The record gives the reactivity of an RNA of 177 nucleotides to DMS and 2A3. For 2A3, 2,157 sequencing reads were counted. The RNA was probed in 150 mM KOAc, 10 mM MgCl2 and 150 mM bicine (pH 8.5) at 24 C. Reactivities are given for positions 27 through 126. It was measured as part of the RMDB library TTRDES.
[RMDB]
RNA sequence: GGGAACGACUCGAGUAGAGUCGAAAAGAUAUGGACAUAGGACUCCGAUAAGCUGGGUUCGGAAACGAACCUCAGCUUUUGACGGAGCCUAUGUCCUAAGUCAAAGUGAGCCGCUUCGGCGGCUCACCUAGUAUGCGUACUUCGGUACGCAUACUAGAAAAGAAACAACAACAACAAC
Reactivity to DMS in 0.01 (KOAc 150mM, MgCl2 10mM, bicine 150mM(pH8.5), 24C), signal-to-noise 2, nucleotides 027 to 126: g000a020u000a110u000g000g010a010c000a010u000a010g000g000a210c010u000c010c000g030a130u010a010a010g030c000u000g000g010g010u000u000c010g040g010a010a010a060c000g010a010a010c010c000u020c010a000g020c000u000u000u010u000g020a200c080g000g000a010g000c010c000u000a000u000g020u000c000c000u000a000a050g000u000c000a100a160a200g000u000g010a020g030c040c000g020c000u000u010c210g020g030c000g010g010c010u000c000a000c000
Reactivity to 2A3 in 0.01 (KOAc 150mM, MgCl2 10mM, bicine 150mM(pH8.5), 24C), signal-to-noise 1, nucleotides 027 to 126: g000a000u010a000u070g000g000a020c010a000u030a010g070g110a300c010u010c020c080g180a300u110a300a000g000c020u010g000g020g020u020u010c030g000g020a050a020a000c010g000a000a000c000c000u070c010a010g000c060u000u010u020u040g130a100c030g000g000a020g050c000c000u010a000u000g000u020c000c000u010a000a000g000u000c000a000a000a090g000u020g000a000g000c000c000g050c060u110u180c300g120g000c000g000g030c000u000c000a000c010